[RMDB]
RNA sequence: GGGAACGACUCGAGUAGAGUCGAAAAUUAGCGCACUAAUGCUAAGAAAGUUAGACUGCAAAGAAUAUAUUUUCGCCAACACCAGGGGACUUUUGUCCACCAACACCAGGUUUUACCCUGCCAUCUGGUAUAGGGUGAUCUUCGGAUCACCCUAUACAAAAGAAACAACAACAACAAC
Reactivity to DMS in 0.01 (KOAc 150mM, MgCl2 10mM, bicine 150mM(pH8.5), 24C), signal-to-noise 3, nucleotides 027 to 126: u010u030a010g030c010g000c180a100c160u050a090a040u010g010c030u010a020a090g000a040a050a070g010u000u010a020g000a210c040u000g000c150a070a100a080g010a070a120u030a060u040a030u010u000u000u000c010g000c050c050a020a070c100a070c080c080a060g000g010g020g010a040c050u000u010u020u050g000u010c020c000a080c040c050a050a060c160a040c060c070a070g000g010u000u010u020u020a120c050c000c000u010g010c060c090a040u020c060u000g010
Reactivity to 2A3 in 0.01 (KOAc 150mM, MgCl2 10mM, bicine 150mM(pH8.5), 24C), signal-to-noise 6, nucleotides 027 to 126: u010u010a030g000c010g010c010a030c140u100a080a030u170g020c020u020a030a030g080a070a100a010g070u060u050a050g020a090c070u040g040c090a070a100a070g090a260a000u070a030u020a100u150u050u070u080c080g010c020c010a080a030c030a020c060c020a010g000g010g020g000a010c030u100u150u130u230g040u020c020c030a080c020c010a090a000c010a010c020c020a000g010g030u020u000u000u120a040c000c000c010u010g020c030c010a080u070c070u090g010
Conditions: 150 mM KOAc, 10 mM MgCl2 and 150 mM bicine (pH 8.5), 24 C.
Structure probing data (DMS and 2A3) for a 177-nucleotide construct.
For DMS the reverse transcriptase was MarathonRT.
Values cover nucleotides 27 to 126.